This 177-nucleotide RNA was probed chemically with 2A3 and DMS. For 2A3, 1,828 sequencing reads were counted. Values are in units of 0.01, from 0 to 300, in steps of 10. Values cover nucleotides 27 to 126. The reactions ran in a buffer of 150 mM KOAc, 10 mM MgCl2 and 150 mM bicine (pH 8.5), at 24 C. 2A3 adducts were read by reverse transcription with SuperScript II with manganese.

[RMDB]
RNA sequence: GGGAACGACUCGAGUAGAGUCGAAAAAAAAAGAGCGUAAUCGCGUCAUUGAGUGACGUGAAGAUCAUCCAAGUGUGCUGUCUACAGUCGUAGAUAGCGCACAAUACGCUGAUGAUCAAUCAAAAAACUACGUGUGUACGUUCGCGUACACACGUAGAAAAGAAACAACAACAACAAC
Reactivity to 2A3 in 0.01 (KOAc 150mM, MgCl2 10mM, bicine 150mM(pH8.5), 24C), signal-to-noise 2, nucleotides 027 to 126: a000a000a000a000a000g140a020g020c060g050u060a060a090u070c020g000c010g030u000c010a030u130u300g220a150g190u050g000a010c000g000u020g030a040a000g020a010u010c000a000u000c030c050a110a140g010u010g010u010g040c010u000g010u000c000u010a060c060a260g170u290c170g000u090a000g010a010u000a000g000c000g000c000a000c010a000a000u090a010c020g000c060u020g010a020u000g000a000u030c000a030a040u080c040a000a070a000a020a070a150
Reactivity to DMS in 0.01 (KOAc 150mM, MgCl2 10mM, bicine 150mM(pH8.5), 24C), signal-to-noise 1, nucleotides 027 to 126: a000a060a020a050a030g020a050g020c010g000u010a130a040u000c000g000c010g000u000c000a000u010u010g020a160g010u010g030a010c000g010u000g010a070a070g010a020u000c000a010u000c010c100a070a070g000u000g010u000g020c010u000g010u000c000u000a000c020a170g000u010c280g000u000a000g000a000u000a000g000c000g000c000a000c010a050a030u020a170c100g000c020u020g000a050u000g000a000u000c030a150a090u010c090a000a050a030a000a140a080